RNA sequence: GGGAACGACUCGAGUAGAGUCGAAAAACGGUACCUGUUCGCAGGUACCGUAAAAAAGAUAUGGAAUAUCGCUAGGAGUCCUCCUCGGAAACGAGGGUGACUCCUUGGACCGAGUAUUCCUAAGUCAAAAAGAUGCAUUACUUCGGUAAUGCAUCAACAACGUAUCAAUGUUCGCAUUGAUACGUUGAAAAGAAACAACAACAACAAC
Reactivity to 2A3 in 0.01 (KOAc 150mM, MgCl2 10mM, bicine 150mM(pH8.5), 24C), signal-to-noise 4, nucleotides 027 to 156: a000c010g000g000u020a000c000c000u010g030u060u070c300g020c120a000g020g000u000a000c000c000g000u010a010a000a000a000a000a020g060a040u080a040u090g000g000a000a000u010a000u020c010g000c040u010a010g000g000a010g000u000c010c030u020c000c000u000c020g030g020a060a030a030c010g000a000g010g000g010u030g000a000c010u000c000c010u010u040g000g010a010c020c050g010a020g170u020a010u000u000c000c000u010a080a010g040u040c050a040a000a000a000a160g010a000u010g000c010a000u000u000a000c010u020u070c210g060g000u000a010a000u000g000c010a000u000c000a000a000
Reactivity to DMS in 0.01 (KOAc 150mM, MgCl2 10mM, bicine 150mM(pH8.5), 24C), signal-to-noise 2, nucleotides 027 to 156: a060c010g000g000u000a000c000c000u000g000u000u000c300g060c020a020g000g010u000a000c000c010g020u000a000a010a080a080a040a040g000a110u000a300u000g010g020a010a120u000a030u000c020g020c030u020a060g010g010a040g000u000c000c040u000c030c010u010c010g030g000a150a110a180c020g030a010g000g000g000u000g010a060c030u000c000c010u000u000g020g010a070c150c010g000a130g020u010a010u000u000c010c000u000a060a170g000u010c080a050a060a100a110a100g020a010u000g010c000a020u010u000a000c010u000u010c290g010g010u010a010a010u010g000c000a000u000c000a030a100